[RMDB]
RNA sequence: GGGAACGACUCGAGUAGAGUCGAAAACUUUGGAGGGUGAGCUGAGAAUCGUUGUUAAGUGUGGGUAAAAGACGGCUGAAUACCCCGACGAGGCCUAUUUGUGUGAAAUGGUGCCUGGUCCCCAAAAGGUGCUCCGGUGUUUCGGCGCCGGAGUACCAAAAGAAACAACAACAACAAC
Reactivity to 2A3 in 0.01 (KOAc 150mM, MgCl2 10mM, bicine 150mM(pH8.5), 24C), signal-to-noise 3, nucleotides 027 to 126: c020u080u050u130g070g030a050g020g040g010u040g010a030g010c020u010g080a020g060a140a090u120c100g010u040u050g050u090u050a090a100g020u020g020u080g070g040g000u030a030a060a000a090g090a040c070g030g000c040u030g020a030a030u090a090c000c000c000c000g000a000c010g000a010g010g000c000c000u030a060u020u040u060g220u050g020u030g030a010a030a070u040g020g020u140g000c000c000u050g070g010u070c000c010c000c000a000a050a010a040
Reactivity to DMS in 0.01 (KOAc 150mM, MgCl2 10mM, bicine 150mM(pH8.5), 24C), signal-to-noise 3, nucleotides 027 to 126: c040u010u020u020g010g000a110g010g010g010u010g000a050g000c010u010g020a090g020a100a070u030c090g010u000u010g000u000u030a060a090g000u020g020u000g000g000g000u000a030a070a090a100g020a090c110g000g000c020u010g000a110a090u030a100c030c000c000c070g000a040c060g000a060g010g010c020c010u000a040u020u000u010g020u040g000u030g010a040a030a010u010g010g000u020g000c020c010u000g000g000u000c000c010c010c030a050a030a100a100

Source: RMDB library OK1LIB, as collected in RNAgym. Structure probing data (2A3 and DMS) for a 177-nucleotide construct. Values cover nucleotides 27 to 126. The reactions ran in a buffer of 150 mM KOAc, 10 mM MgCl2 and 150 mM bicine (pH 8.5), at 24 C. 2A3 adducts were read by reverse transcription with SuperScript II with manganese. The DMS profile rests on 9,116 reads.